Structure probing data (2A3) for a 177-nucleotide construct. The RNA was probed in 150 mM KOAc, 10 mM MgCl2 and 150 mM bicine (pH 8.5) at 24 C.
RNA sequence: GGGAACGACUCGAGUAGAGUCGAAAAGAAGACGGGCCGCCAACAAAUUGGCAUUCUAAAUUCGGUGGUAAUGCAUGGAAGUAUGAUUCUGAGACAGAUGAAUAUUAUUUACAUUUAUUUGAUGUCAGUGAUAGCGCCAUUUCGAUGGCGCUAUCACAAAAGAAACAACAACAACAAC
Reactivity to 2A3 in 0.01 (KOAc 150mM, MgCl2 10mM, bicine 150mM(pH8.5), 24C), signal-to-noise 1, nucleotides 027 to 126: g030a000a000g000a000c030g010g010g000c000c040g000c080c000a060a060c030a000a250a040u300u040g000g040c000a000u260u130c060u300a030a030a030u050u080c090g050g020u000g000g060u240a010a010u100g000c010a060u080g090g000a000a000g000u180a200u280g040a100u000u100c000u050g000a050g000a060c050a130g030a080u000g000a010a030u040a040u060u230a130u090u300u000a230c130a050u000u000u230a130u030u080u040g190a060u000g000u050c040a040